[RMDB]
RNA sequence: GGGAACGACUCGAGUAGAGUCGAAAAGAUAUGGAAAGCAUAGACAUGCAGCAUCGGAAACGAUCUGCAACAGCUAUGUCUUUCCUAAGUCAAAACCUCUGGCAGCACUUCGGUGCUGCCAGAGGAACUGAAUAUCGAAGUUCGCUUCGAUAUUCAGAAAAGAAACAACAACAACAAC
Reactivity to DMS in 0.01 (KOAc 150mM, MgCl2 10mM, bicine 150mM(pH8.5), 24C), signal-to-noise 2, nucleotides 027 to 126: g010a010u010a260u020g000g000a020a010a020g020c000a000u000a000g010a090c090a200u000g010c000a020g000c190a000u000c010g000g000a120a070a140c010g020a010u000c010u000g010c000a040a020c290a150g000c000u010a010u000g000u020c000u000u000u010c000c000u000a010a060g000u020c000a150a090a130a100c000c020u000c000u000g000g000c000a000g000c010a020c000u010u010c210g020g010u000g000c000u000g000c000c020a010g010a000g020g000a010a030
Reactivity to 2A3 in 0.01 (KOAc 150mM, MgCl2 10mM, bicine 150mM(pH8.5), 24C), signal-to-noise 2, nucleotides 027 to 126: g010a010u040a010u110g000g000a010a000a010g020c010a000u010a010g110a240c050a060u080g000c000a000g010c050a010u000c000g000g000a040a050a030c010g000a010u000c000u010g000c020a020a060c040a010g040c000u010a000u000g030u040c010u040u000u000c000c010u000a020a010g000u010c020a020a050a070a250c020c010u040c000u030g020g020c030a000g060c030a020c070u110u240c300g130g000u000g010c030u000g050c000c000a010g000a010g000g000a020a000
Overview:
Conditions: 150 mM KOAc, 10 mM MgCl2 and 150 mM bicine (pH 8.5), 24 C. An RNA of 177 nucleotides, treated with DMS and 2A3 and read out base by base. For DMS, 1,829 sequencing reads were counted. For 2A3, 3,263 sequencing reads were counted.